[RMDB]
RNA sequence: GGGAACGACUCGAGUAGAGUCGAAAAGAUAUGGACCAUGCUACCACCUGUGUAGACAUGCGAUUAGACAUCGGAAACGAUGUAUUCUCGCAACAGCUACACAGGUGGUAGCCGCUGGUCCUAAGUCCUAAUAGUAUGGCUUCGGCCAUACUAUUAGAAAAGAAACAACAACAACAAC
Reactivity to DMS in 0.01 (KOAc 150mM, MgCl2 10mM, bicine 150mM(pH8.5), 24C), signal-to-noise 5, nucleotides 027 to 126: g000a140u010a290u010g010g010a030c010c000a010u010g000c000u000a010c000c000a010c000c000u000g010u000g000u000a000g000a050c090a280u000g010c000g010a010u000u000a010g010a020c000a000u000c000g010g000a150a120a270c000g020a010u010g010u000a010u000u000c040u000c000g020c000a030a070c300a180g000c000u010a000c000a010c000a000g010g020u000g000g000u000a000g000c010c010g000c010u000g000g010u000c000c000u000a010a090g010u010c030